Chemical mapping of a 177-nucleotide RNA with 2A3 and DMS. Conditions: 150 mM KOAc, 10 mM MgCl2 and 150 mM bicine (pH 8.5), 24 C. Reactivities are given for positions 27 through 126.

[RMDB]
RNA sequence: GGGAACGACUCGAGUAGAGUCGAAAAGAUAUGGAUAUUACCCGCUGAUGACCUUGAUCGGAAACGAUCAAGCAAGGCGAGGUACUGUAUCCUAAGUCAAAGGUGAAUCUGUUCGCAGAUUCACCAAGCACAGUAGGAACUUCGGUUCCUACUGUGCAAAAGAAACAACAACAACAAC
Reactivity to 2A3 in 0.01 (KOAc 150mM, MgCl2 10mM, bicine 150mM(pH8.5), 24C), signal-to-noise 2, nucleotides 027 to 126: g000a030u080a010u170g020g010a010u050a020u060u090a040c010c000c020g020c000u080g060a300u080g000a040c020c000u020u000g000a000u010c000g000g020a130a060a000c010g000a000u040c000a000a000g000c030a070a170g000g000c030g140a260g000g000u030a090c050u070g070u070a020u040c010c020u030a080a010g060u010c090a160a090a210g010g010u020g000a000a000u000c000u000g030u170u090c300g000c140a010g000a010u000u000c000a000c000c010a000a000
Reactivity to DMS in 0.01 (KOAc 150mM, MgCl2 10mM, bicine 150mM(pH8.5), 24C), signal-to-noise 2, nucleotides 027 to 126: g010a040u000a250u000g000g010a000u000a050u010u010a040c000c000c000g040c000u000g020a180u020g020a080c300c020u020u000g000a010u010c010g000g000a090a080a140c000g000a000u000c020a020a030g010c030a030a110g000g000c000g040a190g000g000u010a010c300u000g000u000a000u000c010c010u010a010a100g000u020c060a100a130a060g000g000u000g000a050a000u000c020u000g020u010u000c290g020c000a000g010a000u000u000c000a000c000c010a010a020